[RMDB]
RNA sequence: GGGAACGACUCGAGUAGAGUCGAAAAUGGUAAGCUGCGAUAAGCUUGGGCGAGGAGCAUACAUCUUUGGAACCCAAGAUUGCCUAAUGGGACUUCCUAGCACAUUUUUUUUGUGUUGAUCCGUGUACCCUCAAGACAGGUUCGCCUGUCUUGAGGGAAAAGAAACAACAACAACAAC
Reactivity to 2A3 in 0.01 (KOAc 150mM, MgCl2 10mM, bicine 150mM(pH8.5), 24C), signal-to-noise 3, nucleotides 027 to 126: u080g010g020u060a030a020g030c030u070g050c080g030a040u030a120a030g030c000u020u030g020g000g000c020g000a030g020g000a030g030c040a050u070a170c070a040u090c040u050u030u080g050g040a050a030c010c000c010a000a030g050a040u050u130g030c000c020u060a070a060u100g030g000g070a090c040u010u000c010c000u030a030g000c010a000c000a050u000u010u030u020u000u020u140u130g040u000g000u000u010g010a070u090c010c040g010u050g020u100a100
Reactivity to DMS in 0.01 (KOAc 150mM, MgCl2 10mM, bicine 150mM(pH8.5), 24C), signal-to-noise 2, nucleotides 027 to 126: u000g020g000u000a050a040g050c050u000g010c170g000a060u040a060a050g000c060u020u010g010g010g000c040g000a210g000g010a010g000c220a140u050a070c140a060u000c040u040u000u010g000g060a090a080c010c000c000a010a040g010a070u050u010g000c000c020u010a060a050u070g010g030g010a080c050u000u000c000c000u000a020g030c020a000c000a000u000u000u000u020u000u010u000u070g030u000g010u000u000g000a220u000c010c010g000u000g020u000a130
The record gives the reactivity of an RNA of 177 nucleotides to 2A3 and DMS. 2A3 adducts were read by reverse transcription with SuperScript II with manganese. It was measured as part of the RMDB libraries RFM100 and RFMREP.